The record gives the reactivity of an RNA of 177 nucleotides to DMS and 2A3. Conditions: 150 mM KOAc, 10 mM MgCl2 and 150 mM bicine (pH 8.5), 24 C.
[RMDB]
RNA sequence: GGGAACGACUCGAGUAGAGUCGAAAAUAGAAAACCCAUUUAUUGUAUGUCAUUGGCUGUUCGAGAUUAAGCAGCUGUAAUUCGAUGGCCAUACUCAUUAAAUGGGUUGGCUGUUUGCUCUGUACCACUUCUGUGUUAUGUUCGCAUAACACAGAAGAAAAGAAACAACAACAACAAC
Reactivity to DMS in 0.01 (KOAc 150mM, MgCl2 10mM, bicine 150mM(pH8.5), 24C), signal-to-noise 3, nucleotides 027 to 126: u000a020g000a030a030a020a010c010c000c000a010u000u000u000a010u000u000g000u010a060u020g010u000c200a080u010u010g010g010c000u010g010u010u010c030g010a040g010a060u010u000a040a110g010c090a090g020c120u010g010u000a020a040u000u000c010g010a010u000g010g010c010c010a010u000a030c020u000c020a010u000u000a010a020a010u000g000g010g010u000u010g000g010c020u000g010u000u000u000g020c110u010c120u020g000u000a160c070c080a250
Reactivity to 2A3 in 0.01 (KOAc 150mM, MgCl2 10mM, bicine 150mM(pH8.5), 24C), signal-to-noise 8, nucleotides 027 to 126: u090a000g020a010a050a000a000c000c000c000a000u000u000u000a020u010u050g070u050a080u110g060u030c090a070u040u100g020g000c010u020g090u140u090c120g070a110g050a300u100u110a100a020g010c040a020g020c080u050g070u070a040a070u060u050c030g000a000u010g000g010c010c000a000u010a010c010u030c040a050u020u050a000a000a000u000g000g000g000u000u000g010g000c010u010g020u040u020u050g030c030u030c050u130g070u080a040c000c020a040